[RMDB]
RNA sequence: GGGAACGACUCGAGUAGAGUCGAAAAGUAGAGCGGUUUGUGUCUUUGGCUAUAGAUGCUUACCCUCUCACAAAGCAUGAAGAUAUAGAAUACCAGAAUGUAUUCUGGGUCUACUUACAGUAUAUAGCUUGUCACAAGUAUUCGUACUUGUGACAAGAAAAGAAACAACAACAACAAC
Reactivity to DMS in 0.01 (KOAc 150mM, MgCl2 10mM, bicine 150mM(pH8.5), 24C), signal-to-noise 5, nucleotides 027 to 126: g010u010a010g010a000g020c210g060g000u000u010u000g020u000g010u000c000u000u010u000g020g020c150u010a070u000a020g010a010u000g000c010u000u000a020c010c000c000u000c010u010c090a120c110a090a090a130g010c110a080u010g000a110a040g000a150u010a160u010a010g000a030a040u010a110c000c130a080g000a070a050u010g010u000a080u010u000c000u000g000g000g030u000c010u000a040c070u000u010a090c120a110g000u000a100u000a090u000a090g010
Reactivity to 2A3 in 0.01 (KOAc 150mM, MgCl2 10mM, bicine 150mM(pH8.5), 24C), signal-to-noise 4, nucleotides 027 to 126: g120u120a010g000a020g020c150g020g000u010u010u020g010u010g020u010c010u060u050u080g090g000c020u030a020u050a180g010a010u000g000c000u000u000a010c000c000c000u000c010u000c010a040c030a040a120a010g100c050a040u150g030a070a020g040a030u090a010u030a180g050a080a050u100a300c030c030a040g040a100a050u160g090u190a190u070u000c000u000g000g000g000u000c000u030a060c020u090u100a070c030a040g120u010a050u020a020u060a270g030
The data come from the RNA Mapping Database (RMDB), library OK2TRN. Structure probing data (DMS and 2A3) for a 177-nucleotide construct. The reactions ran in a buffer of 150 mM KOAc, 10 mM MgCl2 and 150 mM bicine (pH 8.5), at 24 C. High DMS reactivity at an A or C suggests that its Watson-Crick edge is free. Values cover nucleotides 27 to 126.